[RMDB]
RNA sequence: GGGAACGACUCGAGUAGAGUCGAAAAGUGAGCUAUGGUCAUGCCACUGCACUCUAGCGUGGGCAACAGAGUGAGACCCUAUGAAGGUUUUUACCUCAGUACAAACAGUUGAGUCACUCAUACUCUUUAGUUCUUACUCCUCAGUGUCAUUGCUGUGCGACGUGAUACCUUUCGAGGUAUCACGUCGAAAAGAAACAACAACAACAAC
Reactivity to 2A3 in 0.01 (KOAc 150mM, MgCl2 10mM, bicine 150mM(pH8.5), 24C), signal-to-noise 2, nucleotides 027 to 156: g060u010g040a120g000c040u020a090u230g090g020u120c080a090u100g020c000c030a050c040u070g000c040a040c040u110c040u060a000g000c000g030u090g040g050g000c000a070a030c030a050g020a000g050u020g010a050g000a050c010c000c010u100a150u270g050a070a180g040g000u020u020u020u140u140a120c000c000u010c020a010g100u090a040c100a080a170a010c020a050g070u120u090g100a000g030u050c020a020c120u090c010a050u050a110c020u040c000u080u100u080a010g010u110u000c000u000u070a040c000u080c030c010u000c020a000g000u000g010u060c060a090u080u250g010c030u040g010u050g070